[RMDB]
RNA sequence: GGGAACGACUCGAGUAGAGUCGAAAAGAGGAGCAGGCGGAUAAUCUUGUGCAGUAUGCAUGCUCGUAACUCCAGCGCACAAGUGGAAGCACAAGAUUUCAAUCCAGCAUAGCGCAGGAGCCGCAGAAAUAUAGCGCAUCUUCGGAUGCGCUAUAUUAAAAGAAACAACAACAACAAC
Reactivity to 2A3 in 0.01 (KOAc 150mM, MgCl2 10mM, bicine 150mM(pH8.5), 24C), signal-to-noise 2, nucleotides 027 to 126: g110a020g030g010a060g000c040a010g040g020c060g030g010a070u080a090a020u030c000u000u000g000u000g000c060a090g040u180a020u090g020c000a000u050g010c000u040c040g010u030a040a060c040u000c040c010a010g030c010g030c010a050c050a200a110g050u060g100g010a080a010g000c000a000c000a000a000g000a000u040u070u090c060a050a090u020c010c000a000g000c050a060u110a040g060c020g000c010a020g000g040a000g020c020c030g040c000a010g090a080
Reactivity to DMS in 0.01 (KOAc 150mM, MgCl2 10mM, bicine 150mM(pH8.5), 24C), signal-to-noise 3, nucleotides 027 to 126: g010a110g010g000a050g010c010a030g010g050c040g000g020a140u020a050a050u000c000u010u000g040u000g000c000a090g020u030a080u000g020c040a100u010g040c040u010c030g010u010a080a250c050u010c040c040a050g000c050g010c050a080c150a110a160g000u030g000g010a050a110g030c000a000c010a010a040g020a050u000u010u020c180a070a070u010c020c010a120g010c040a110u040a100g000c090g010c000a130g000g000a030g000c030c020g040c130a130g000a120